[RMDB]
RNA sequence: GGGAACGACUCGAGUAGAGUCGAAAAUGCGAAUUUUCAUGAAUGGAUUGACUGGGACUGGCAAACCUGGCUUGACCACUGUUAUGAAUUCACGAAAGCUUCCAUAACGGAACACAUGCGGUCUGUUUGGCUUCCAAAAACACCAUCCACAUUACCGUGACUUAUGUAGCUUCGGCUACAUAAGUCAAAAAGAAACAACAACAACAAC
Reactivity to DMS in 0.01 (KOAc 150mM, MgCl2 10mM, bicine 150mM(pH8.5), 24C), signal-to-noise 1, nucleotides 027 to 156: u010g170c140g010a160a050u000u000u000u000c030a090u000g010a030a010u010g020g000a090u010u000g000a090c060u010g030g010g000a140c030u030g000g000c070a100a080a120c030c010u000g000g030c070u010u010g010a160c150c030a190c010u000g030u020u010a030u000g000a100a020u000u000c010a050c050g000a170a060a190g000c040u000u030c010c000a120u040a020a050c050g010g040a130a180c100a120c070a020u000g030c020g000g030u000c020u010g000u010u000u020g010g000c110u000u020c050c050a040a100a040a090a060c080a110c030c030a120u010c020c040a040c070a120u000u010a090c030c000g050
Reactivity to 2A3 in 0.01 (KOAc 150mM, MgCl2 10mM, bicine 150mM(pH8.5), 24C), signal-to-noise 3, nucleotides 027 to 156: u140g000c010g060a040a070u070u090u030u110c040a050u120g190a200a030u060g050g010a010u040u060g050a080c090u080g000g010g050a060c040u010g020g030c040a030a050a030c030c040u050g070g000c010u060u060g030a030c010c000a030c050u010g030u070u020a020u000g040a060a040u110u040c080a080c170g100a140a070a080g020c050u010u000c010c000a030u040a090a030c080g010g020a080a020c060a010c000a080u060g070c020g000g000u000c010u020g030u050u070u030g030g000c030u060u000c020c050a090a000a010a050a020c060a030c040c000a010u040c020c010a030c000a080u110u280a030c100c070g020
Chemical mapping of a 207-nucleotide RNA with DMS and 2A3. DMS adducts were read by reverse transcription with MarathonRT. Conditions: 150 mM KOAc, 10 mM MgCl2 and 150 mM bicine (pH 8.5), 24 C. The data come from the RNA Mapping Database (RMDB), library OK3TST. For 2A3, 1,474 sequencing reads were counted. Reactivities are given for positions 27 through 156. For DMS, 1,538 sequencing reads were counted.